This 207-nucleotide RNA was probed chemically with 2A3 and DMS. The data come from the RNA Mapping Database (RMDB), library VIROID. Reactivities are rounded to 0.1 and cut off at 0 and 3. For 2A3, 4,742 sequencing reads were counted. For DMS the reverse transcriptase was MarathonRT. Conditions: 150 mM KOAc, 10 mM MgCl2 and 150 mM bicine (pH 8.5), 24 C.

RNA sequence: GGGAACGACUCGAGUAGAGUCGAAAACGGAUCAUUCCUGGUUGAGACAGGAGUAAUCCCAGCAGAAACAGGGUUUUCACCCUUCCUUUCUUCUGGUUUCCUUCCUCUCGCCGGAAGGUCUUCGGCCCUCGCCCGGAGCUUCUCUCUGGAGACUACCCCCGAUAUAUAAGUUCGCUUAUAUAUCGGGAAAAGAAACAACAACAACAAC
Reactivity to 2A3 in 0.01 (KOAc 150mM, MgCl2 10mM, bicine 150mM(pH8.5), 24C), signal-to-noise 5, nucleotides 027 to 156: c040g010g000a020u030c050a300u010u030c010c050u260g020g040u190u300g020a020g000a030c240a120g000g010a010g010u020a010a010u040c000c010c000a000g000c010a000g010a010a010a080c290a130g010g020g020u120u170u300u300c160a050c000c000c000u010u030c000c000u000u000u000c000u020u000c000u000g000g000u000u020u010c000c000u010u050c000c010u000c000u000c000g000c020c000g000g000a000a000g000g000u010c000u070u080c030g080g000c000c000c010u010c060g030c010c010c000g050g000a020g020c130u270u070c070u060c000u010c030u120g080g020a070g050a100c070u120a090c020c010
Reactivity to DMS in 0.01 (KOAc 150mM, MgCl2 10mM, bicine 150mM(pH8.5), 24C), signal-to-noise 1, nucleotides 027 to 156: c100g030g010a040u000c030a100u000u010c000c000u000g080g010u000u020g060a100g000a060c060a050g030g010a060g000u000a020a030u010c100c030c020a050g030c110a080g030a040a040a030c100a020g010g020g000u000u000u010u000c250a150c010c000c000u010u010c060c040u000u000u000c010u000u020c020u000g020g010u000u020u000c020c010u000u000c090c020u000c000u010c040g000c000c010g000g000a040a040g030g010u000c030u000u000c050g000g010c000c020c050u000c050g050c030c020c010g000g040a030g010c110u010u020c110u020c030u010c040u000g000g010a260g000a180c030u000a160c150c050